Structure probing data (DMS and 2A3) for a 177-nucleotide construct.
The RNA was probed in 150 mM KOAc, 10 mM MgCl2 and 150 mM bicine (pH 8.5) at 24 C.
[RMDB]
RNA sequence: GGGAACGACUCGAGUAGAGUCGAAAAGACUUGUGGUUCGCCACAAGUCAAAUAAGCAUGUAGAAAUGGCCAAACUACAUGCAUCGAAAGAAAGGCCUUAAAAAAGGACAUGCUUCGGCAUGUCCAAGAAUCUAUUUGGGUUCGCCCAAAUAGAUUCAAAAGAAACAACAACAACAAC
Reactivity to DMS in 0.01 (KOAc 150mM, MgCl2 10mM, bicine 150mM(pH8.5), 24C), signal-to-noise 2, nucleotides 027 to 126: g010a000c000u000u010g040u000g000g010u000u020c200g030c020c000a000c020a000a000g020u010c000a010a030a070u000a100a180g020c000a010u000g000u000a010g000a030a000a020u010g050g000c010c020a270a200a070c010u000a000c020a020u010g000c010a060u020c140g020a100a130a160g000a080a150a140g040g030c010c000u010u020a020a020a080a070a060a060g000g010a000c000a010u000g000c000u000u000c160g010g000c010a000u010g000u010c000c000a030a040
Reactivity to 2A3 in 0.01 (KOAc 150mM, MgCl2 10mM, bicine 150mM(pH8.5), 24C), signal-to-noise 2, nucleotides 027 to 126: g000a000c000u000u000g000u000g030g090u030u080c210g020c050c000a000c000a010a000g000u000c000a000a000a000u020a000a010g000c000a000u000g010u020a010g020a020a030a030u030g010g000c010c000a000a000a020c000u000a000c000a000u000g010c000a040u180c050g170a120a160a100g140a070a150a060g020g010c000c000u010u030a060a030a000a000a000a010g000g000a000c000a000u010g000c000u040u040c140g090g010c000a000u000g000u020c010c000a000a000